[RMDB]
RNA sequence: GGGAACGACUCGAGUAGAGUCGAAAAACUCAAGAGAAUCGUCGACUUGAGAUCACAUGGACUGUUGCGACGGCACUUAUUUUAUUAUUUGUUGGCGUUGCCUCAUAUGGUGUUCUCGCAAAUGAAAAUAUUACAUAUCAACCGCAGGCAGAAAACGCAUACGAUGGUGGUUCGCCACCAUCGUAUGAAAAGAAACAACAACAACAAC
Reactivity to DMS in 0.01 (KOAc 150mM, MgCl2 10mM, bicine 150mM(pH8.5), 24C), signal-to-noise 1, nucleotides 027 to 156: a070c010u020c010a000a050g010a220g000a100a090u010c080g010u010c030g090a140c030u010u000g000a080g020a220u010c020a100c010a090u030g000g000a060c070u000g030u000u010g010c000g010a060c020g020g000c030a060c060u000u000a040u000u020u000u000a130u020u000a070u000u050u010g010u000u000g000g020c020g000u010u010g000c010c010u020c060a030u000a070u000g070g050u000g010u000u000c010u010c010g100c040a140a060a210u010g000a030a040a030a050u010a040u010u000a170c050a060u000a150u000c030a110a110c040c020g030c050a050g020g110c060a070g010a040a050a040a080c070g010
Reactivity to 2A3 in 0.01 (KOAc 150mM, MgCl2 10mM, bicine 150mM(pH8.5), 24C), signal-to-noise 3, nucleotides 027 to 156: a000c010u060c020a010a010g070a010g040a070a200u140c070g130u050c060g160a130c030u040u020g010a000g020a050u130c020a040c010a070u100g060g010a030c030u020g050u080u030g000c010g020a000c010g020g050c000a010c000u080u070a070u130u230u050u060a150u150u010a080u020u070u080g110u100u030g080g030c020g060u020u060g010c000c000u010c020a060u020a060u110g060g030u020g020u060u080c030u000c000g000c030a030a090a040u170g070a080a030a060a010u190a030u030u170a020c070a050u140a040u160c050a040a030c020c030g020c070a030g000g010c010a010g050a030a140a020a020c060g000